[RMDB]
RNA sequence: GGGAACGACUCGAGUAGAGUCGAAAACGUCGCGUGUUCGCACGCGACGAAACGAGAAACGGCAAAUAAGCCGAUCCCAGGCGAUCGUACGCCAUACACAAAAAAGUCCCUGCUUCGGCAGGGACAAGUCCUCCUAUAUGUUCGCAUAUAGGAGGACAAAAGAAACAACAACAACAAC
Reactivity to 2A3 in 0.01 (KOAc 150mM, MgCl2 10mM, bicine 150mM(pH8.5), 24C), signal-to-noise 1, nucleotides 027 to 126: c010g030u000c030g010c010g030u010g050u040u030c160g000c090a020c010g010c000g020a000c000g010a000a020a040c080g020a010g080a040a140a040c000g010g000c040a080a180a300u180a240a040g030c030c010g010a040u090c050c010c040a040g030g000c000g010a050u110c090g090u110a080c070g040c030c000a140u220a090c300a070c110a190a070a050a000a000a000g000u010c010c000c010u000g020c020u040u120c250g030g030c000a000g000g000g000a000c010a000a000
Reactivity to DMS in 0.01 (KOAc 150mM, MgCl2 10mM, bicine 150mM(pH8.5), 24C), signal-to-noise 2, nucleotides 027 to 126: c000g010u000c000g040c000g020u000g020u000u020c190g040c000a050c090g040c000g010a000c000g000a000a070a060c120g010a090g000a070a120a130c010g000g020c000a100a120a120u000a120a120g000c000c000g000a060u000c010c000c010a220g030g000c020g000a070u000c090g000u000a280c030g000c000c000a140u000a040c190a070c180a010a070a050a090a110a040g000u000c000c000c000u000g000c000u000u000c210g030g000c000a000g000g010g010a000c000a010a030
Notes: This 177-nucleotide RNA was probed chemically with 2A3 and DMS. The RNA was probed in 150 mM KOAc, 10 mM MgCl2 and 150 mM bicine (pH 8.5) at 24 C. For 2A3, 728 sequencing reads were counted. In probing experiments dimethyl sulfate is read out at A N1 and C N3, which are open when not base-paired.